[RMDB]
RNA sequence: GGGAACGACUCGAGUAGAGUCGAAAAACUAGUAUGUACACGAUGAGACUGCCGUGUCGUCUAGACUGCGGAUCCAAUAAUCUCAGAUCUGGGAGAUAUUGUCUCAAGAGUACGAGACAAGUACUCAGUGUUAUGUCUACUUCGGUGGACGUAACACAAAAGAAACAACAACAACAAC
Reactivity to DMS in 0.01 (KOAc 150mM, MgCl2 10mM, bicine 150mM(pH8.5), 24C), signal-to-noise 9, nucleotides 027 to 126: a070c030u010a030g010u020a040u020g010u020a010c030a060c040g010a170u020g010a050g010a040c040u010g020c120c090g000u010g010u000c010g000u010c030u010a020g010a080c010u010g000c090g000g000a040u010c120c120a090a080u040a100a060u000c020u000c030a040g000a100u010c050u000g010g010g000a040g010a070u010a050u010u010g000u000c000u000c010a070a050g000a060g010u010a010c020g000a100g010a070c150a060a070g000u010a040c010u000c020a150
Reactivity to 2A3 in 0.01 (KOAc 150mM, MgCl2 10mM, bicine 150mM(pH8.5), 24C), signal-to-noise 9, nucleotides 027 to 126: a000c020u030a020g100u100a060u110g080u070a020c030a010c020g040a050u120g010a020g040a040c040u060g080c070c020g010u010g000u010c010g010u000c010u020a020g010a060c020u040g030c050g050g010a010u010c030c030a050a040u150a090a060u040c020u000c030a060g020a220u010c030u050g030g020g010a040g010a020u050a050u070u090g010u000c000u000c010a030a010g030a010g030u020a010c020g010a010g040a050c060a070a030g010u000a020c000u000c030a010
The record gives the reactivity of an RNA of 177 nucleotides to DMS and 2A3. Values are in units of 0.01, from 0 to 300, in steps of 10. DMS adducts were read by reverse transcription with MarathonRT. The RNA was probed in 150 mM KOAc, 10 mM MgCl2 and 150 mM bicine (pH 8.5) at 24 C. It was measured as part of the RMDB library OK1LIB.